Notes:
Structure probing data (DMS and 2A3) for a 177-nucleotide construct. Conditions: 150 mM KOAc, 10 mM MgCl2 and 150 mM bicine (pH 8.5), 24 C.
[RMDB]
RNA sequence: GGGAACGACUCGAGUAGAGUCGAAAAGUGUGCUUCUGUGUGUAGGGGUGCGUGUGUGUGUUCCUAAUGUGGGCUGAUGGGUGUAACAACCAAAUGAGUGACUGAAGCAUAAGUCUCAAAUCAUCGACUGUAAAACAAGGUUCGCCUUGUUUUACAGAAAAGAAACAACAACAACAAC
Reactivity to DMS in 0.01 (KOAc 150mM, MgCl2 10mM, bicine 150mM(pH8.5), 24C), signal-to-noise 7, nucleotides 027 to 126: g020u000g020u000g010c040u000u000c020u000g020u000g020u010g020u010a080g010g010g010g030u000g010c060g010u010g020u010g010u010g020u000g020u000u000c010c020u000a050a100u000g030u000g010g000g010c040u000g000a090u000g010g000g020u010g010u000a090a100c150a090a070c040c030a040a070a080u010g010a080g010u000g000a080c040u000g010a060a060g020c050a060u010a040a070g000u000c010u000c040a060a070a080u010c120a090u010c130g010a220
Reactivity to 2A3 in 0.01 (KOAc 150mM, MgCl2 10mM, bicine 150mM(pH8.5), 24C), signal-to-noise 5, nucleotides 027 to 126: g060u060g000u020g020c020u020u030c030u040g080u010g030u020g060u110a030g030g010g000g020u020g020c050g000u090g010u020g000u010g020u010g010u050u040c000c000u040a060a060u170g040u070g050g050g000c020u030g020a060u080g040g000g020u040g020u040a060a050c040a000a020c030c000a050a120a120u140g010a040g050u050g030a040c030u040g020a040a000g010c010a020u020a070a050g050u000c000u000c020a080a130a080u110c080a040u070c040g060a070